[RMDB]
RNA sequence: GGGAACGACUCGAGUAGAGUCGAAAAGAAAGAAAGAAAGAUUGUGGUAUCAGGACUAUGUUAUGUGAAUGUUGUUACACAAUAUUGUGUUACUCAUCUGUAUAACCUAGCUCUGAUACCAUGAAAAAGAAUCAUAUUUAUUCGUAAAUAUGAUUCUAAAAGAAACAACAACAACAAC
Reactivity to 2A3 in 0.01 (KOAc 150mM, MgCl2 10mM, bicine 150mM(pH8.5), 24C), signal-to-noise 9, nucleotides 027 to 126: g090a020a050a010g100a030a080a010g120a040a110a010g120a060u100u130g010u000g010g000u000a000u000c000a000g000g010a010c000u000a000u010g000u010u000a010u010g050u020g060a070a010u030g040u210u030g010u050u170a010c010a000c010a040a110u210a180u300u170g000u000g000u000u010a000c000u000c000a010u000c010u020g030u030a000u000a000a000c000c010u000a000g000c000u000c000u010g000a000u000a000c000c000a000u000g010a000a010a000a000
Reactivity to DMS in 0.01 (KOAc 150mM, MgCl2 10mM, bicine 150mM(pH8.5), 24C), signal-to-noise 9, nucleotides 027 to 126: g010a100a080a090g010a100a090a090g020a110a090a100g000a190u010u010g010u000g000g000u000a010u000c000a000g000g010a050c000u000a000u000g000u000u000a000u000g010u000g010a030a010u000g000u020u010g010u000u000a020c000a000c010a050a190u030a120u020u010g020u000g010u000u000a010c000u000c010a000u000c020u000g010u000a000u000a000a010c000c040u000a000g010c010u000c000u000g000a010u000a010c000c000a000u000g000a010a060a080a100

Chemical mapping of a 177-nucleotide RNA with 2A3 and DMS. It was measured as part of the RMDB libraries RFM100 and RFMREP. The RNA was probed in 150 mM KOAc, 10 mM MgCl2 and 150 mM bicine (pH 8.5) at 24 C. For DMS the reverse transcriptase was MarathonRT.